[RMDB]
RNA sequence: GGGAACGACUCGAGUAGAGUCGAAAAAAAAAAGCUUUUACGAGGUAUCAGCACUUUUCUUUCAUUAGGGGGAAGGCGUGAGGAAAGUACCAAACAGCAGCGGAGUUUUAAACUUUAAAUAGACAGGAUUGUCAAUUAUGUUCGCAUAAUUGACAAUAAAAGAAACAACAACAACAAC
Reactivity to DMS in 0.01 (KOAc 150mM, MgCl2 10mM, bicine 150mM(pH8.5), 24C), signal-to-noise 4, nucleotides 027 to 126: a000a020a070a060a140a120g000c040u000u000u000u000a030c040g020a180g020g010u000a020u000c060a060g020c060a060c060u000u010u010u010c030u000u010u020c050a110u030u020a060g030g020g010g010g010a060a040g010g000c080g010u000g010a090g000g000a040a060a070g010u010a060c020c030a020a040a060c080a050g010c100a040g020c070g000g000a050g000u000u010u020u010a050a050a110c020u010u020u010a020a050a060u030a080g010a090c160a050g010g000
Reactivity to 2A3 in 0.01 (KOAc 150mM, MgCl2 10mM, bicine 150mM(pH8.5), 24C), signal-to-noise 5, nucleotides 027 to 126: a000a000a000a000a000a000g080c070u110u090u040u050a010c060g050a040g110g030u030a030u100c030a020g040c010a040c050u010u020u030u040c020u010u090u070c030a130u080u220a030g000g020g000g020g040a020a010g030g000c040g030u060g000a030g000g030a050a040a020g030u060a060c000c010a000a040a050c020a040g020c020a000g000c030g090g030a040g020u030u040u070u160a040a070a000c000u020u050u140a090a080a070u080a050g060a030c040a020g110g060